[RMDB]
RNA sequence: GGGAACGACUCGAGUAGAGUCGAAAAGGGUGUUGAUGUCGGGGGAAACCCUCCCGUGAACCAGCGGGAUAGAGAGAAAGACAAAGACCGGGAAUAAACUAAAGCGCCUUAGUCUGGCGCUUUAGUUCAGUAACAUCCGUUUCGACGGAUGUUACUGAAAAGAAACAACAACAACAAC
Reactivity to DMS in 0.01 (KOAc 150mM, MgCl2 10mM, bicine 150mM(pH8.5), 24C), signal-to-noise 2, nucleotides 027 to 126: g000g040g000u040g030u000u020g010a270u010g020u010c000g000g000g000g020g000a100a180a140c020c030c020u000c000c000c020g000u020g030a080a080c150c050a160g000c020g000g010g000a030u020a010g000a270g030a110g010a000a000a020g010a020c010a030a070a300g000a040c020c030g000g010g010a090a090u040a080a040a060c010u000a000a000a000g020c000g000c000c000u000u000a080g020u020c200u000g020g010c030g000c000u000u000u000a000g010u000u000
Reactivity to 2A3 in 0.01 (KOAc 150mM, MgCl2 10mM, bicine 150mM(pH8.5), 24C), signal-to-noise 2, nucleotides 027 to 126: g090g020g030u200g020u080u030g030a080u030g010u030c010g000g000g010g020g010a020a050a070c010c010c000u000c000c000c000g010u040g020a050a070c050c010a010g010c010g000g040g000a010u050a000g130a000g000a010g010a020a030a000g000a000c000a000a040a020g020a010c010c020g020g000g120a080a210u200a120a080a000c000u000a000a000a000g000c000g020c000c010u110u060a080g140u190c120u040g000g000c000g000c000u000u000u000a000g000u010u000